Structure probing data (DMS and 2A3) for a 177-nucleotide construct. Conditions: 150 mM KOAc, 10 mM MgCl2 and 150 mM bicine (pH 8.5), 24 C.
RNA sequence: GGGAACGACUCGAGUAGAGUCGAAAAUUUUAGUACAAGCGAGUACACGCAGUAUACUGCCACUUGUGUGAGAAUACUUUUAGUACAAGCGAGUACACGCAGUAUACUGCCACUUGUGUGAGAAUACAUACGAAGUUUCUUUCGAGAAACUUCGUAUAAAAGAAACAACAACAACAAC
Reactivity to DMS in 0.01 (KOAc 150mM, MgCl2 10mM, bicine 150mM(pH8.5), 24C), signal-to-noise 3, nucleotides 027 to 126: u020u030u010u030a180g000u010a050c060a000a050g050c090g000a080g030u080a090c150a170c300g010c010a000g000u000a000u000a000c000u000g010c000c150a050c000u000u000g000u010g000u030g020a130g000a170a160u010a020c040u000u040u030u040a040g000u000a000c040a050a300g000c040g010a090g000u040a060c100a150c300g010c040a030g000u030a000u000a000c000u000g000c000c090a000c020u000u010g010u000g000u030g010a070g000a010a050u010a060c180
Reactivity to 2A3 in 0.01 (KOAc 150mM, MgCl2 10mM, bicine 150mM(pH8.5), 24C), signal-to-noise 4, nucleotides 027 to 126: u050u060u020u060a040g010u030a060c030a060a010g010c040g060a030g080u120a080c070a010c110g000c010a000g000u000a000u000a000c010u010g000c000c000a010c000u000u000g000u000g020u070g120a140g130a200a050u090a080c040u110u170u130u300a070g020u030a020c030a050a000g020c010g010a010g020u090a060c030a000c080g000c010a000g000u000a000u000a000c000u010g000c000c010a010c000u020u030g010u020g040u030g060a070g050a100a060u100a070c090